[RMDB]
RNA sequence: GGGAACGACUCGAGUAGAGUCGAAAACUAUGGGGGAAAUGGCACCAUACAUGGUAAUUCUGGAAAAUUCAAUCCAAACCAGGUUUAGUGCAGGGUCUUAUCCUCUGCUAUGGAGUUAUGCCAUGGGCCCCUACUCUCUAUUCGUAGAGAGUAGGGGAAAAGAAACAACAACAACAAC
Reactivity to DMS in 0.01 (KOAc 150mM, MgCl2 10mM, bicine 150mM(pH8.5), 24C), signal-to-noise 3, nucleotides 027 to 126: c040u030a090u020g000g010g000g010g020a160a130a050u010g010g020c000a050c010c010a060u000a030c030a080u000g010g010u010a060a090u000u010c150u010g000g000a030a090a070a120u010u010c290a100a140u000c040c050a040a110a090c020c010a020g010g000u000u010u000a090g010u010g010c000a010g010g000g020u010c190u000u000a060u000c160c010u000c010u000g000c020u000a030u000g010g000a140g010u020u030a140u010g010c000c000a000u000g000g010g020